RNA sequence: GGGAACGACUCGAGUAGAGUCGAAAAAGUGGCGAAUUUGAGGAUUAUUCGCGUUAUAUCGGUGGGGUUUACUCUUCUGAAUGGUUUUGGGCGAAAAUUCUGCAUGUCACGCGCGCCGAUAAAGCGGGUCAAUAUACAAUUUCGAUUGUAUAUUGACAAAAGAAACAACAACAACAAC
Reactivity to DMS in 0.01 (KOAc 150mM, MgCl2 10mM, bicine 150mM(pH8.5), 24C), signal-to-noise 9, nucleotides 027 to 126: a100g020u000g010g010c010g010a110a070u000u010u010g010a100g000g000a060u000u000a150u000u000c010g020c010g000u010u000a070u000a080u000c030g010g020u000g000g000g000g010u000u000u010a080c050u000c030u000u000c030u000g010a060a080u000g010g010u000u010u010u000g010g010g020c020g000a030a030a030a050u000u000c020u000g010c060a060u010g010u000c040a050c070g010c100g010c040g020c010c020g000a100u010a030a070a140g010c060g000g010
Reactivity to 2A3 in 0.01 (KOAc 150mM, MgCl2 10mM, bicine 150mM(pH8.5), 24C), signal-to-noise 8, nucleotides 027 to 126: a000g060u050g030g010c030g040a060a090u100u070u150g060a060g040g020a020u040u050a140u190u080c020g000c010g030u050u040a090u010a030u120c020g010g010u030g010g020g000g020u030u070u110a100c040u030c000u080u020c020u050g090a130a070u050g060g020u090u190u190u110g090g040g010c030g030a010a010a020a030u040u020c010u040g070c020a040u080g020u040c010a010c020g020c010g000c020g020c010c010g030a040u080a160a060a010g040c030g070g040
Source: RMDB library OK2TST, as collected in RNAgym. The record gives the reactivity of an RNA of 177 nucleotides to DMS and 2A3. For 2A3, 14,895 sequencing reads were counted. For 2A3 the reverse transcriptase was SuperScript II with manganese. The reactions ran in a buffer of 150 mM KOAc, 10 mM MgCl2 and 150 mM bicine (pH 8.5), at 24 C.